Structure probing data (2A3 and DMS) for a 177-nucleotide construct. Values are in units of 0.01, from 0 to 300, in steps of 10. DMS adducts were read by reverse transcription with MarathonRT. For 2A3, 2,595 sequencing reads were counted. For 2A3 the reverse transcriptase was SuperScript II with manganese. Values cover nucleotides 27 to 126.

[RMDB]
RNA sequence: GGGAACGACUCGAGUAGAGUCGAAAAGAUAUGGAGUCGUUGAUGGAGAAGCGGGUCGGAAACGACCCACUUCUAUGAAGUCACGACUCCUAAGUCAAACACAGCAUCCCUUCGGGGAUGCUGUGAAGCUAGUAACUGACUUCGGUCAGUUACUAGCAAAAGAAACAACAACAACAAC
Reactivity to 2A3 in 0.01 (KOAc 150mM, MgCl2 10mM, bicine 150mM(pH8.5), 24C), signal-to-noise 1, nucleotides 027 to 126: g010a000u040a000u100g000g000a000g020u020c040g040u190u300g040a000u050g120g250a200g000a040a000g000c010g010g000g000u010c040g030g000a080a000a020c010g010a000c000c000c000a000c010u010u000c010u000a300u270g130a050a000g000u000c010a000c010g030a000c010u000c000c000u000a020a000g010u000c000a000a080a010c020a010c000a000g050c020a000u000c000c000c000u030u060c300g100g010g010g010a010u020g000c020u010g000u000g000a000a000
Reactivity to DMS in 0.01 (KOAc 150mM, MgCl2 10mM, bicine 150mM(pH8.5), 24C), signal-to-noise 1, nucleotides 027 to 126: g010a020u010a250u020g000g010a010g000u020c000g000u010u000g030a070u000g060g030a040g000a010a000g020c030g020g000g020u020c000g000g010a040a050a160c000g010a010c020c000c000a040c000u000u000c000u000a100u010g020a180a280g000u000c000a000c000g010a000c000u000c020c000u000a000a070g020u020c020a120a130a300c010a000c000a000g010c000a000u010c000c000c000u020u030c250g020g000g010g000a010u000g000c010u010g020u010g000a030a110